[RMDB]
RNA sequence: GGGAACGACUCGAGUAGAGUCGAAAAUCCUUCCUUUUCGAAGGAAGGACAGUGCACAGUCUUCGCAUCUGUGAAUCACACAACAGCCGUGUCUAUGCGUGGUUUUAAUCAAGUUCGCUUGAUUAAAUCCAAAAGCUAAAUUCGUUUAGCUUUUGGAAAAAGAAACAACAACAACAAC
Reactivity to 2A3 in 0.01 (KOAc 150mM, MgCl2 10mM, bicine 150mM(pH8.5), 24C), signal-to-noise 8, nucleotides 027 to 126: u010c000c000u000u010c000c000u040u050u020u090c220g130a010a010g000g000a010a000g010g000a000c030a030g050u060g010c010a010c000a030g010u010c040u130u100c130g000c030a050u020c020u010g030u020g050a090a100u120c030a020c000a000c010a110a120c020a070g080c020c030g100u090g040u040c070u090a060u080g000c010g030u040g000g090u030u050u030u040a000a000u000c000a000a010g010u030u050c180g050c080u010u000g000a000u010u010a020a020a030
Reactivity to DMS in 0.01 (KOAc 150mM, MgCl2 10mM, bicine 150mM(pH8.5), 24C), signal-to-noise 9, nucleotides 027 to 126: u000c000c000u000u000c000c000u000u000u000u010c150g010a020a010g010g000a010a010g000g000a010c120a040g010u000g010c020a020c020a030g010u000c070u000u000c060g010c040a060u000c020u000g010u000g000a120a060u010c120a150c030a050c060a070a080c130a100g010c040c040g010u010g000u010c100u000a040u000g010c040g030u000g010g000u000u000u000u000a010a010u000c000a000a010g010u000u010c230g020c000u000u000g000a010u000u000a000a010a060
The record gives the reactivity of an RNA of 177 nucleotides to 2A3 and DMS. The reactions ran in a buffer of 150 mM KOAc, 10 mM MgCl2 and 150 mM bicine (pH 8.5), at 24 C. For 2A3, 28,040 sequencing reads were counted.